[RMDB]
Structure probing data (DMS and 2A3) for a 177-nucleotide construct. The 2A3 profile rests on 2,278 reads. It was measured as part of the RMDB library OK2TST. For DMS the reverse transcriptase was MarathonRT.

RNA sequence: GGGAACGACUCGAGUAGAGUCGAAAAAGCCAAUCAGGAUAAAGACAAAUGCCAGAUGCAUCAGGCUAGGAUCCAGCUCUUUGGCAUGCUCGGCGACCACCGUCCAGAAGAUAGCGCUGCCGGGGUCCGAAUAUCUGCAUUUCGAUGCAGAUAUUCGAAAAGAAACAACAACAACAAC
Reactivity to DMS in 0.01 (KOAc 150mM, MgCl2 10mM, bicine 150mM(pH8.5), 24C), signal-to-noise 2, nucleotides 027 to 126: a090g010c020c010a080a050u010c110a070g010g000a070u020a080a140a130g020a060c080a070a100a060u000g010c040c030a080g000a060u000g010c090a050u010c120a090g010g010c030u000a080g000g000a080u000c020c030a070g010c080u000c070u000u010u000g010g010c030a020u000g000c050u000c050g000g010c040g000a080c050c030a070c160c040g000u000c050c030a120g010a110a140g000a050u000a070g000c140g000c020u000g020c070c030g000g000g000g010u000c060
Reactivity to 2A3 in 0.01 (KOAc 150mM, MgCl2 10mM, bicine 150mM(pH8.5), 24C), signal-to-noise 2, nucleotides 027 to 126: a000g040c030c020a010a050u110c050a050g100g000a070u100a180a120a040g100a110c050a040a180a020u130g000c020c010a040g010a090u090g020c020a040u060c040a020g050g000c030u050a070g020g050a040u000c010c010a010g040c040u040c040u090u100u060g010g010c010a010u020g000c000u010c030g000g040c040g030a050c020c040a100c010c040g040u020c000c010a040g030a090a010g050a130u140a070g050c050g000c050u020g000c000c010g000g000g000g000u020c030